[RMDB]
RNA sequence: GGGAACGACUCGAGUAGAGUCGAAAACGGAGGAGCGCUUCAGGGAUCCCCGGGGAAACCUGGAGCGAACUGGCAAAAAAGGACGGUGGGGAGUGCCCAGCGGCCGACAGGAGUAAUUCCCGCCGAAUCGAUAAUAUAAGUUCGCUUAUAUUAUCGAAAAAGAAACAACAACAACAAC
Reactivity to DMS in 0.01 (KOAc 150mM, MgCl2 10mM, bicine 150mM(pH8.5), 24C), signal-to-noise 3, nucleotides 027 to 126: c050g000g020a170g010g000a130g020c010g010c010u000u010c020a030g020g000g030a300u000c000c010c040c270g020g010g010g000a020a070a260c010c000u000g000g020a020g000c010g010a030a040c030u000g010g020c080a000a040a080a050a070a090g000g000a050c050g000g010u000g000g000g000g010a110g010u000g010c000c010c010a050g010c030g020g010c010c020g000a090c120a060g000g000a100g000u010a040a130u000u000c010c000c020g010c030c060g000a070a110
Reactivity to 2A3 in 0.01 (KOAc 150mM, MgCl2 10mM, bicine 150mM(pH8.5), 24C), signal-to-noise 1, nucleotides 027 to 126: c020g030g020a040g030g020a070g050c010g000c000u030u000c000a000g010g000g050a040u010c000c010c040c110g260g030g000g000a030a030a020c000c000u000g000g000a010g020c000g010a000a000c010u030g010g000c010a000a000a000a160a210a000g070g010a040c060g010g010u040g000g040g010g010a170g060u090g040c010c010c010a030g070c020g070g000c020c040g010a010c030a040g000g070a060g030u040a030a070u030u040c000c000c000g000c010c010g020a030a050